[RMDB]
Structure probing data (2A3 and DMS) for a 177-nucleotide construct. For DMS, 1,266 sequencing reads were counted. The 2A3 profile rests on 1,072 reads. In probing experiments dimethyl sulfate is read out at A N1 and C N3, which are open when not base-paired.
RNA sequence: GGGAACGACUCGAGUAGAGUCGAAAAGAUAUGGACGCAUCGAUCUACGGGGUUCUUGGAUUUAUCGGAAACGAUUGUCAGAACAAGUAGGGAGCGUCCUAAGUCAAAAGACCGCUUCGGCGGUCAACAAUCUAAAACGCUUCGGCGUUUUAGAUUGAAAAGAAACAACAACAACAAC
Reactivity to 2A3 in 0.01 (KOAc 150mM, MgCl2 10mM, bicine 150mM(pH8.5), 24C), signal-to-noise 1, nucleotides 027 to 126: g020a000u060a010u190g020g000a000c000g000c010a200u300c000g080a120u000c010u010a010c010g300g000g190g000u060u010c020u110u300g100g000a040u210u260u240a040u060c020g000g070a000a030a100c020g000a000u020u020g020u000c020a010g000a010a000c070a220a000g010u000a020g000g000g000a050g020c000g040u020c010c000u000a020a000g010u040c020a000a020a010a180g030a010c020c020g020c000u090u110c290g060g000c000g020g030u000c020a000a000
Reactivity to DMS in 0.01 (KOAc 150mM, MgCl2 10mM, bicine 150mM(pH8.5), 24C), signal-to-noise 2, nucleotides 027 to 126: g000a000u000a300u030g000g000a000c000g040c010a220u000c100g000a070u010c010u000a000c010g010g020g020g010u000u000c000u020u010g040g000a030u000u000u000a000u000c000g020g000a060a060a220c010g020a000u000u000g000u000c000a040g000a050a010c010a090a120g000u000a020g000g030g010a030g000c010g000u000c000c000u010a000a080g010u000c030a060a070a190a120g000a010c000c000g010c000u000u010c190g030g000c000g020g000u000c000a030a050
For 2A3 the reverse transcriptase was SuperScript II with manganese.